Description
The record gives the reactivity of an RNA of 177 nucleotides to 2A3 and DMS. Values cover nucleotides 27 to 126. It was measured as part of the RMDB libraries RFM100 and RFMREP. The RNA was probed in 150 mM KOAc, 10 mM MgCl2 and 150 mM bicine (pH 8.5) at 24 C.
[RMDB]
RNA sequence: GGGAACGACUCGAGUAGAGUCGAAAAGCAAUCCUUGAAUGUUCUGUUGGUCAGUGCAGCGUUUGCUUUCGUCUUGUCCAUGCUCUUCAUCUGAGCUGGCUGGGGAAAGCGGAAUGACUGGUAGUACUUAGGCAAAUCAUUUCGAUGAUUUGCCUAAAAAAGAAACAACAACAACAAC
Reactivity to 2A3 in 0.01 (KOAc 150mM, MgCl2 10mM, bicine 150mM(pH8.5), 24C), signal-to-noise 1, nucleotides 027 to 126: g110c010a000a120u040c000c000u080u060g180a130a050u300g000u040u040c000u020g130u120u000g080g000u180c060a000g000u000g250c040a050g030c000g080u070u090u140g040c040u000u040u040c070g300u000c090u110u010g120u000c000c000a020u110g040c000u000c000u120u070c040a300u000c160u160g000a000g030c000u040g000g000c000u030g000g000g000g000a000a000a000g000c040g020g040a060a010u020g010a170c000u000g020g000u080a110g040u040a010c060
Reactivity to DMS in 0.01 (KOAc 150mM, MgCl2 10mM, bicine 150mM(pH8.5), 24C), signal-to-noise 2, nucleotides 027 to 126: g000c230a090a120u000c000c020u000u030g010a120a080u010g000u010u000c050u010g000u000u000g000g010u000c050a070g010u020g000c040a050g000c040g020u000u000u000g000c000u000u010u000c000g000u020c010u020u000g010u000c000c000a010u020g010c000u000c000u000u020c300a140u020c240u010g000a000g020c020u000g010g020c010u010g000g000g000g000a000a020a010g000c000g040g010a040a020u000g000a060c020u000g000g010u010a070g010u000a050c110